[RMDB]
RNA sequence: GGGAACGACUCGAGUAGAGUCGAAAAGUUUAUUGGUGUUGGAAAAAUUAUCCAUGCUGCGUCUGCAGAGUGGUUGAUAGUUGUUCCUAGAUAUGUAAAAUAAUCCAACGUACUAGGUAGCAAAUUGUCUAGAUAAAAUACUGAAUCAAAUGGCGCACAAAAGUGCCUAAUUCGUUAGGCACUUUUGAAAAGAAACAACAACAACAAC
Reactivity to DMS in 0.01 (KOAc 150mM, MgCl2 10mM, bicine 150mM(pH8.5), 24C), signal-to-noise 2, nucleotides 027 to 156: g030u020u000u000a070u000u000g010g000u000g020u000u000g030g000a060a070a080a100a110u010u000a030u000c030c000a040u000g040c080u000g010c000g070u000c160u000g040c060a090g000a080g020u010g020g020u000u030g020a110u000a070g020u000u000g020u000u000c000c000u030a070g010a160u010a050u000g030u010a040a110a130a190u000a130a150u000c070c040a030a100c040g020u010a080c030u000a000g020g040u000a040g020c010a060a040a110u000u000g020u000c030u000a110g000a200u010a040a040a030a170u010a100c060u010g010a060a070u000c020a050a040a110u020g000g000c060g010c040a070
Reactivity to 2A3 in 0.01 (KOAc 150mM, MgCl2 10mM, bicine 150mM(pH8.5), 24C), signal-to-noise 1, nucleotides 027 to 156: g010u000u100u030a120u000u100g000g030u040g080u050u000g000g040a000a000a040a120a250u150u020a110u090c000c000a000u090g000c030u030g000c000g050u050c140u100g020c050a080g100a030g110u060g000g050u020u020g000a100u000a000g040u020u020g000u010u010c000c000u000a000g050a130u010a000u030g010u080a020a050a050a100u130a160a050u050c090c020a020a030c010g000u000a000c000u000a000g090g020u150a000g110c010a000a000a240u040u020g000u030c000u020a090g040a040u180a160a050a040a000u180a050c120u030g040a000a090u080c000a000a190a000u200g000g000c020g000c000a020